[RMDB]
RNA sequence: GGGAACGACUCGAGUAGAGUCGAAAAGCGAUGGACAACAGGUUGAUAUUCCUGUACCACCUCUUCAUCGUUUGAGCAAUGGGGGGACGCAGGAGGAUAGGGUAAGCGCACUAUUGGACAUGUGCGUAACCUAAAUAUAUUUCGAUAUAUUUAGGUUAAAAGAAACAACAACAACAAC
Reactivity to DMS in 0.01 (KOAc 150mM, MgCl2 10mM, bicine 150mM(pH8.5), 24C), signal-to-noise 9, nucleotides 027 to 126: g010c030g010a040u000g010g000a050c200a090a060c080a030g000g010u000u010g010a120u010a140u010u010c040c040u000g010u000a090c060c080a110c040c020u000c060u000u000c030a030u000c030g010u000u000u010g010a120g010c130a080a070u010g000g000g000g000g010g010a090c170g010c080a060g000g010a070g010g000a110u000a070g000g000g010u000a060a120g010c010g000c000a010c000u000a170u000u010g010g010a120c170a090u000g000u000g000c010g010u000
Reactivity to 2A3 in 0.01 (KOAc 150mM, MgCl2 10mM, bicine 150mM(pH8.5), 24C), signal-to-noise 9, nucleotides 027 to 126: g010c010g020a030u050g010g010a030c030a100a010c020a130g030g050u080u090g140a120u040a090u160u070c000c010u010g010u030a050c020c040a090c010c030u050c020u090u050c020a050u040c020g050u050u080u220g090a080g040c090a100a150u150g000g010g000g000g000g010a010c050g000c050a010g010g040a030g020g020a080u110a070g040g000g030u050a050a030g010c000g010c000a000c010u070a070u110u150g060g030a040c040a100u080g000u010g000c000g000u000
This 177-nucleotide RNA was probed chemically with DMS and 2A3. For 2A3 the reverse transcriptase was SuperScript II with manganese. As a SHAPE reagent, 2A3 marks flexible, mostly unpaired nucleotides at the ribose 2'-OH. The reactions ran in a buffer of 150 mM KOAc, 10 mM MgCl2 and 150 mM bicine (pH 8.5), at 24 C. DMS adducts were read by reverse transcription with MarathonRT. Source: RMDB library OK2TRN, as collected in RNAgym.